[RMDB]
RNA sequence: GGGAACGACUCGAGUAGAGUCGAAAAAGAGUGGGAAUCUGAUACCUCUGUCAAUAAUGCUAAUGAGAUUGCCAAGGGCAAUCCUUUCGCCAUGGAGAUCAACAUCCAGGCCAACCUGUGGCGGAACUUCCUCUACGCGAACGUGGCGCUGUACCUGCGUCUUUAGAAAGUUCGCUUUCUAAAGACGAAAAGAAACAACAACAACAAC
Reactivity to DMS in 0.01 (KOAc 150mM, MgCl2 10mM, bicine 150mM(pH8.5), 24C), signal-to-noise 2, nucleotides 027 to 156: a050g020a100g020u010g000g000g020a110a090u000c050u010g010a150u000a040c050c020u000c020u000g010u000c050a050a120u010a080a110u000g000c030u000a120a120u010g010a150g000a020u000u000g010c010c000a090a160g040g040g010c020a040a020u000c020c010u000u000u000c050g040c040c020a050u000g000g010a070g010a110u000c030a050a080c060a120u000c050c060a050g000g010c050c040a050a080c050c060u000g020u010g010g030c000g020g010a060a080c060u000u000c030c000u000c040u000a060c100g020c030g010a040a080c060g010u000g020g010c010g000c020u000g020u000a090c040c030u000g000
Reactivity to 2A3 in 0.01 (KOAc 150mM, MgCl2 10mM, bicine 150mM(pH8.5), 24C), signal-to-noise 5, nucleotides 027 to 156: a000g090a020g030u070g000g020g010a050a100u050c050u070g020a030u110a130c010c020u050c040u040g090u070c050a080a080u130a140a070u150g000c020u070a050a030u120g030a090g010a300u000u020g000c000c060a130a180g140g060g000c010a010a010u020c000c000u010u020u020c030g000c020c020a070u090g000g010a060g010a080u100c050a020a070c020a070u020c050c030a040g040g000c040c010a040a070c010c030u050g010u040g030g000c000g020g020a030a030c030u080u040c030c020u020c030u040a010c040g030c020g040a080a010c050g050u040g020g010c040g010c050u040g010u060a080c000c010u020g050